Record summary
Structure probing data (2A3 and DMS) for a 177-nucleotide construct. DMS adducts were read by reverse transcription with MarathonRT. The reactions ran in a buffer of 150 mM KOAc, 10 mM MgCl2 and 150 mM bicine (pH 8.5), at 24 C.

RNA sequence: GGGAACGACUCGAGUAGAGUCGAAAAAGUAUGGAAGAGGGAGUGACAUCAAGGAGAGCGAUUGUCAGACGUUCAUUUCUGUACGACAAACAUUUCCGUAGGGCAAAAAAAUGGCGCACAAUGUGCGCGUACACUCGUCGUUCGCGACGAGUGUACGAAAAGAAACAACAACAACAAC
Reactivity to 2A3 in 0.01 (KOAc 150mM, MgCl2 10mM, bicine 150mM(pH8.5), 24C), signal-to-noise 9, nucleotides 027 to 126: a000g070u050a030u090g030g020a030a010g040a100g060g040g000a070g070u050g020a020c010a040u060c060a070a060g070g020a040g040a020g050c050g050a070u060u110g020u030c020a010g020a120c070g080u040u030c060a080u050u080u020c030u040g030u030a020c010g020a010c080a010a080a010c030a080u030u030u030c020c010g040u090a090g030g050g000c100a050a010a000a000a010a010a120u140g070g000c000g020c000a010c020a050a230u300g000u010g020c010g000
Reactivity to DMS in 0.01 (KOAc 150mM, MgCl2 10mM, bicine 150mM(pH8.5), 24C), signal-to-noise 6, nucleotides 027 to 126: a080g020u010a050u020g020g000a030a040g000a060g000g010g010a080g000u020g010a080c090a060u000c050a090a120g020g020a080g000a100g030c100g000a080u020u010g010u010c030a080g000a090c080g010u010u000c070a080u010u010u010c050u030g020u010a040c040g000a070c150a060a070a130c110a130u010u000u000c010c010g010u020a060g010g020g000c090a000a000a030a040a030a060a050u020g010g010c000g010c000a010c020a090a100u040g020u000g020c010g020